[RMDB]
RNA sequence: GGGAACGACUCGAGUAGAGUCGAAAACCGUAGGGAACCUACCCACCUUCGCCAUGGUCGACGAAGUGAGCUUCGAAAGAGGCUCACAGAGACCAUGCGCGAAGAGGGUUCCCUAAACGGAAACUGAGUAUGAUACGUUCGCGUAUCAUACUCAGAAACUCUAACCGCACUUCGGUGCGGUUAGAGUAAAAGAAACAACAACAACAAC
Reactivity to 2A3 in 0.01 (KOAc 150mM, MgCl2 10mM, bicine 150mM(pH8.5), 24C), signal-to-noise 1, nucleotides 027 to 156: c000c000g020u010a010g000g000g000a000a000c000c010u180a160c100c130c050a050c000c010u010u000c000g000c000c000a000u010g000g000u020c010g020a300c070g040a150a000g000u000g000a010g000c010u000u000c000g050a050a040a060g010a000g000g000c010u020c000a000c000a010g010a000g000a000c000c000a000u000g040c040g040c000g010a000a000g000a000g000g030g000u000u000c000c000c000u000a040a020a000c010g060g060a120a010a050c010u000g000a000g000u000a000u000g000a000u000a000c000g020u040u060c250g000c010g130u010a000u000c000a000u000a010c000u000c010a000g000a000a000

An RNA of 207 nucleotides, treated with 2A3 and read out base by base. The 2A3 profile rests on 1,218 reads. Conditions: 150 mM KOAc, 10 mM MgCl2 and 150 mM bicine (pH 8.5), 24 C. The data come from the RNA Mapping Database (RMDB), library RNAMAK. Values are in units of 0.01, from 0 to 300, in steps of 10.